[RMDB]
RNA sequence: GGGAACGACUCGAGUAGAGUCGAAAAGGCUCCCACUUCGGUGGGAGCCAAAGCUGAACGCGCAGCAAGCGUUAAACAUGCAAAAACGCACGUCCAAUGCGCAAAGCUUCCCCUUCGGGGGAAGCAAGAUGUAUUUUCUGUUCGCAGAAAAUACAUCAAAAGAAACAACAACAACAAC
Reactivity to DMS in 0.01 (KOAc 150mM, MgCl2 10mM, bicine 150mM(pH8.5), 24C), signal-to-noise 4, nucleotides 027 to 126: g010g010c000u000c000c000c000a020c000u000u000c190g030g030u010g010g000g010a010g040c000c010a010a010a070g000c040u000g010a080a080c090g000c000g020c030a050g020c120a180a180g000c010g030u010u000a050a060a300c120a070u020g010c110a060a050a050a070a080c070g000c000a040c080g000u000c020c020a090a090u010g000c000g010c070a040a100a120g000c000u000u010c000c010c000c000u000u000c150g030g000g010g000g000a000a000g000c000a020a010
Reactivity to 2A3 in 0.01 (KOAc 150mM, MgCl2 10mM, bicine 150mM(pH8.5), 24C), signal-to-noise 4, nucleotides 027 to 126: g000g010c000u000c030c010c000a000c020u040u050c210g090g000u000g000g010g010a000g000c010c000a010a000a000g000c010u030g040a050a010c070g010c000g000c010a040g030c040a070a060g000c010g010u050u080a150a250a040c090a070u280g070c060a090a060a040a030a070c030g000c020a010c030g020u000c010c020a040a050u070g010c020g000c000a060a030a060g000c000u000u000c020c000c000c000u020u100c180g060g000g000g000g000a000a000g000c000a000a020

An RNA of 177 nucleotides, treated with DMS and 2A3 and read out base by base. For 2A3, 8,883 sequencing reads were counted. High DMS reactivity at an A or C suggests that its Watson-Crick edge is free. High 2A3 reactivity points to a flexible backbone, as in loops and unpaired stretches. The data come from the RNA Mapping Database (RMDB), library M2PK50. The DMS profile rests on 3,860 reads.